An RNA of 177 nucleotides, treated with DMS and 2A3 and read out base by base. The reactions ran in a buffer of 150 mM KOAc, 10 mM MgCl2 and 150 mM bicine (pH 8.5), at 24 C. High DMS reactivity at an A or C suggests that its Watson-Crick edge is free. Source: RMDB library TTRDEL, as collected in RNAgym. For DMS, 1,643 sequencing reads were counted. DMS adducts were read by reverse transcription with MarathonRT.
RNA sequence: GGGAACGACUCGAGUAGAGUCGAAAAGAUAUGGAAAUUAAGAAGCAUUGGAGGUCGGAAACGACUCCCCACCCAAUGAACUACUUCUAUAUUUCCUAAGUCAAAGACGUAACUUCGGUUACGUCAACGCGAUAUAAGAGUUCGCUCUUAUAUCGCGAAAAGAAACAACAACAACAAC
Reactivity to DMS in 0.01 (KOAc 150mM, MgCl2 10mM, bicine 150mM(pH8.5), 24C), signal-to-noise 3, nucleotides 027 to 126: g000a040u000a300u000g000g000a010a000a040u000u000a260a090g000a030a010g000c000a010u000u000g020g000a140g060g000u000c020g030g020a140a060a200c020g010a000c000u010c040c010c000c040a300c040c020c000a000a000u000g000a110a030c060u000a300c030u000u000c000u000a120u020a010u000u000u000c000c000u010a080a090g020u000c080a020a150a140g000a010c000g010u000a000a000c000u000u010c110g010g000u000u000a000c000g010u000c000a040a070
Reactivity to 2A3 in 0.01 (KOAc 150mM, MgCl2 10mM, bicine 150mM(pH8.5), 24C), signal-to-noise 2, nucleotides 027 to 126: g010a010u100a050u120g020g030a000a020a010u040u060a300a060g000a050a000g000c000a010u000u010g020g000a000g000g030u000c020g010g060a100a060a070c030g000a010c030u030c040c000c010c000a020c000c000c000a020a010u020g020a060a050c090u180a060c010u290u020c010u010a090u010a020u160u020u010c000c000u020a150a000g060u060c040a120a110a080g000a010c010g000u000a000a000c000u050u060c300g110g000u020u000a000c000g010u010c000a000a010